Structure probing data (2A3) for a 207-nucleotide construct. The RNA was probed in 150 mM KOAc, 10 mM MgCl2 and 150 mM bicine (pH 8.5) at 24 C.
RNA sequence: GGGAACGACUCGAGUAGAGUCGAAAAGCGCUCCCCUCGGUCCACCUUCGAGGGGGUUCACACCUCCAACCGACGGGCCGGCUACUCUUCUUUCCCUUCUCUCGUCUUCCUCGGUCAACCUCUUAAGUUCCUCUUCUUCCUCCCUGCUGAGGCUCUUGUAACAUACUGUGUUCGCACAGUAUGUUACAAAAGAAACAACAACAACAAC
Reactivity to 2A3 in 0.01 (KOAc 150mM, MgCl2 10mM, bicine 150mM(pH8.5), 24C), signal-to-noise 1, nucleotides 027 to 156: g040c050g080c080u070c020c010c000c000u020c010g000g030u020c050c070a090c080c060u120u090c050g040a120g000g000g020g040g000u170u190c070a050c010a030c010c000u000c010c020a100a090c100c010g060a020c040g020g020g030c020c010g010g010c020u010a050c040u020c020u170u000c000u050u080u050c020c000c000u050u050c020u020c010u020c030g050u000c040u080u050c020c000u040c020g030g020u040c020a040a110c000c010u080c000u000u100a110a020g030u090u020c050c000u050c050u110u010c000u110u010c030c000u020c000c010c020u030g040c040u040g010a010g040g030c010u020c000u010u000